Conditions: 150 mM KOAc, 10 mM MgCl2 and 150 mM bicine (pH 8.5), 24 C.
The record gives the reactivity of an RNA of 177 nucleotides to 2A3 and DMS.
Values cover nucleotides 27 to 126.
DMS adducts were read by reverse transcription with MarathonRT.
RNA sequence: GGGAACGACUCGAGUAGAGUCGAAAAAGCCGGAGGAAAGGGAGGGCGUAGUCCCCCCGGAGGUUGCCAGAGGUCUACGUUUCAUGUCGAUCGUGUUCUACACGUGGGGCAGGCCUACACCCCUACGUCCAUCUUUUCCUUUCGAGGAAAAGAUGGAAAAAGAAACAACAACAACAAC
Reactivity to 2A3 in 0.01 (KOAc 150mM, MgCl2 10mM, bicine 150mM(pH8.5), 24C), signal-to-noise 1, nucleotides 027 to 126: a000g020c000c020g000g040a060g000g100a120a010a060g020g040g030a120g020g020g000c020g020u050a050g080u120c040c040c000c030c000c000g030g000a010g060g020u070u070g010c000c000a060g040a050g020g010u000c010u020a030c030g070u000u040u100c100a100u160g040u060c040g020a060u020c020g060u030g080u160u090c050u090a010c020a010c080g030u020g000g000g100g000c040a020g000g070c000c000u030a030c040a040c010c010c000c030u080a000c010g020
Reactivity to DMS in 0.01 (KOAc 150mM, MgCl2 10mM, bicine 150mM(pH8.5), 24C), signal-to-noise 3, nucleotides 027 to 126: a090g020c030c000g020g020a130g010g000a050a070a120g000g000g000a050g020g010g010c010g020u000a080g010u010c010c000c000c020c010c020g010g010a070g000g020u000u010g020c040c050a110g000a060g010g000u010c020u020a080c100g010u000u000u000c080a140u010g000u000c030g000a130u000c050g010u000g010u000u010c130u020a080c070a050c050g020u000g020g010g000g020c080a050g010g010c040c030u010a090c150a130c090c010c020c020u010a070c130g000